Annotation
The record gives the reactivity of an RNA of 207 nucleotides to 2A3. Conditions: 150 mM KOAc, 10 mM MgCl2 and 150 mM bicine (pH 8.5), 24 C. 2A3 adducts were read by reverse transcription with SuperScript II with manganese. For 2A3, 1,381 sequencing reads were counted.
[RMDB]
RNA sequence: GGGAACGACUCGAGUAGAGUCGAAAAGCGUACUACUGAUCCACCAUUCGCUUGGAUUUAUAUGGGAGCUAUCCCAAAUAGGAUAGCCACCAUAUUGUCAGCGAAUGUUGGAUCAGUAUCGCAAAUCUUGCCACCAGCUUUCGAGCUGGUGGCAAGACGUCUAGAAGAACUUCGGUUCUUCUAGACGAAAAGAAACAACAACAACAAC
Reactivity to 2A3 in 0.01 (KOAc 150mM, MgCl2 10mM, bicine 150mM(pH8.5), 24C), signal-to-noise 2, nucleotides 027 to 156: g010c010g020u090a060c090u000a000c000u040g000a000u010c000c000a010c000c000a000u010u010c000g030c030u160u150g190g010a090u150u300u100a000u000a000u000g040g010g000a080g000c000u000a000u070c040c020c000a150a290a100u220a100g000g000a000u000a000g000c020c010a050c010c000a010u000a010u010u000g010u010c010a010g030c000g010a000a000u000g010u010u000g000g000a000u000c000a000g000u000a000u000c000g000c000a050a020a040u010c000u000u000g060c010c030a000c000c000a030g060c010u070u080u300c300g020a010g000c020u020g040g000u000g000g080c030a020a010g010a000

Description:
Values cover nucleotides 27 to 156.